[RMDB]
RNA sequence: GGGAACGACUCGAGUAGAGUCGAAAAAAUAAAAAUAAUGAACUUAAAUUAAGAUUAUUACCCUCCUUUAAAAAUAUGUGUUUCACAAUUUUUUAUUACCUCUUUACUGGUUUCAUGUCUUAUGGGGCACUUAUAUCACCUUCGGGUGAUAUAAGUGAAAAGAAACAACAACAACAAC
Reactivity to 2A3 in 0.01 (KOAc 150mM, MgCl2 10mM, bicine 150mM(pH8.5), 24C), signal-to-noise 1, nucleotides 027 to 126: a000a030u180a030a030a130a000a000u080a100a060u040g040a110a090c000u140u140a150a150a300u160u100a120a000g020a020u070u090a000u000u040a080c000c040c030u140c000c000u230u090u170a060a040a000a130a000u110a220u240g030u040g040u080u160u300c030a040c000a050a050u000u040u040u040u120u040a120u040u140a000c000c000u090c020u000u030u140a010c060u140g020g130u090u120u250c050a100u280g100u040c040u020u120a070u170g060g000g000g000